[RMDB]
RNA sequence: GGGAACGACUCGAGUAGAGUCGAAAAAAUAAUAGGCGAAACUCGUUUCGCGUUGGCUGCCUAAUUCAAGGAAUUAGCGUGCCUUCAUGCUAAGGGUUUGAUAUCUGCUAAAACCCGGUGCAUUCAUAAGACUUUUGCUUGUUCGCAAGCAAAAGAACUUGACCACUUAGUUCGCUAAGUGGUCAAGAAAAGAAACAACAACAACAAC
Reactivity to 2A3 in 0.01 (KOAc 150mM, MgCl2 10mM, bicine 150mM(pH8.5), 24C), signal-to-noise 1, nucleotides 027 to 156: a010a010u300a030a040u130a060g010g020c000g000a020a010a020c040u020c070g040u000u000u030c010g020c010g040u010u000g010g010c050u070g010c010c060u000a000a000u060u010c110a250a210g120g030a110a000u010u000a010g030c040g050u020g000c000c000u020u010c060a000u010g000c000u030a040a000g000g010g040u000u000u000g040a030u060a100u180c170u150g060c070u140a070a000a000a020c000c000c000g080g000u010g000c000a000u070u060c070a080u020a300a100g120a210c000u010u000u000u000g020c010u000u000g020u050u070c210g040c090a020a040g010c050a000a000a000a000g000a000a010
The record gives the reactivity of an RNA of 207 nucleotides to 2A3. 2A3 adducts were read by reverse transcription with SuperScript II with manganese. Reactivities are given for positions 27 through 156. The reactions ran in a buffer of 150 mM KOAc, 10 mM MgCl2 and 150 mM bicine (pH 8.5), at 24 C. For 2A3, 598 sequencing reads were counted.